Description
Structure probing data (DMS and 2A3) for a 177-nucleotide construct. For 2A3 the reverse transcriptase was SuperScript II with manganese. Conditions: 150 mM KOAc, 10 mM MgCl2 and 150 mM bicine (pH 8.5), 24 C. The data come from the RNA Mapping Database (RMDB), library M2PK50. The 2A3 profile rests on 1,934 reads.
RNA sequence: GGGAACGACUCGAGUAGAGUCGAAAAUCCAGUACGUUCGCGUACUGGAAAAGUCGCGGCUUGAGGGCGUGUACGGCAGCGCACACACUCGACCCUCAAGCCAAAGUCCGUACUUCGGUACGGACAAGCUUCCAAGCGAGUUCGCUCGCUUGGAAGCAAAAGAAACAACAACAACAAC
Reactivity to DMS in 0.01 (KOAc 150mM, MgCl2 10mM, bicine 150mM(pH8.5), 24C), signal-to-noise 1, nucleotides 027 to 126: u020c000c000a000g000u000a000c020g040u000u000c100g050c010g010u000a000c000u010g000g000a000a000a060a130g000u000c090g040c280g020g000c010u010u000g000a040g010g000g020c010g020u000g020u000a020c050g000g020c290a140g000c040g000c010a030c050a030c060a170c110u000c200g020a250c010c000c000u000c010a040a000g020c000c000a020a010a090g010u000c010c000g000u000a020c000u000u010c130g030g000u000a000c000g020g000a000c000a000a070
Reactivity to 2A3 in 0.01 (KOAc 150mM, MgCl2 10mM, bicine 150mM(pH8.5), 24C), signal-to-noise 1, nucleotides 027 to 126: u000c000c000a010g000u000a000c010g000u000u070c190g030c010g110u000a000c000u000g020g080a020a010a000a000g060u050c020g010c090g120g000c010u000u010g000a000g000g000g030c000g000u010g020u000a030c000g030g030c070a090g110c060g000c050a000c010a000c000a020c040u070c040g300a300c010c010c000u000c020a000a000g000c000c010a000a000a000g000u000c010c010g000u010a010c000u020u040c210g080g000u010a000c000g000g000a000c010a000a020